[RMDB]
RNA sequence: GGGAACGACUCGAGUAGAGUCGAAAAACUGCAGGAUACGUCCUGCAGAAGUGGGAGCCAUGAGGGUCUGUGCUGUCUCUGAGCACCGUCUCUUCUGUUCCCCAGAGCUCCGCUUACGAGCGGAGCAUGCCUGGAGCCAUUUCGAUGGCUCCAGGCAAAAAGAAACAACAACAACAAC
Reactivity to 2A3 in 0.01 (KOAc 150mM, MgCl2 10mM, bicine 150mM(pH8.5), 24C), signal-to-noise 2, nucleotides 027 to 126: a000c050u020g010c030a020g020g010a020u020a070c230g120u040c000c020u000g000c000a000g010a050a030g060u220g020g030g030a000g050c020c050a160u200g050a000g000g040g000u000c000u000g000u000g020c000u020g090u180c040u100c160u300g180a030g000c010a000c000c000g010u000c010u030c040u150u000c000u000g000u000u020c010c000c000c000a020g000a000g010c000u000c000c000g030c000u050u090a080c210g110a000g010c000g000g030a000g040c000a000